[RMDB]
RNA sequence: GGGAACGACUCGAGUAGAGUCGAAAAGGAACAAGGAGACAAACCCAUUGAGACUGUGAGUGACGAGCCGGUGGACGUUUGUGCCUCUGCGCUCUCUGCCAUUGUCUCCCACGGCAGUCCGCCGGCAUACCUUCUUAAAGUUCGCUUUAAGAAGGUAAAAAGAAACAACAACAACAAC
Reactivity to DMS in 0.01 (KOAc 150mM, MgCl2 10mM, bicine 150mM(pH8.5), 24C), signal-to-noise 9, nucleotides 027 to 126: g010g000a100a080c120a100a100g010g000a040g010a030c020a040a080a200c040c010c020a160u000u010g000a080g000a060c050u000g000u000g000a050g010u000g000a100c120g000a090g010c010c010g010g010u000g000g010a020c010g020u010u010u010g020u000g010c020c020u010c100u010g010c070g000c030u000c010u000c050u000g010c030c030a160u000u000g000u000c020u000c000c030c120a090c170g000g010c020a080g010u000c020c010g010c010c010g010g020c060a080
Reactivity to 2A3 in 0.01 (KOAc 150mM, MgCl2 10mM, bicine 150mM(pH8.5), 24C), signal-to-noise 6, nucleotides 027 to 126: g060g000a070a080c060a100a080g030g010a020g020a000c030a020a100a080c030c010c030a030u050u210g060a100g040a070c030u050g010u030g070a030g040u040g040a090c050g040a040g000c010c000g000g000u010g000g010a020c010g040u060u180u250g120u100g010c020c010u120c100u100g040c060g010c020u010c000u000c010u020g040c030c010a070u030u050g000u010c010u010c020c000c000a080c050g030g000c010a030g010u020c010c030g000c000c000g000g000c000a000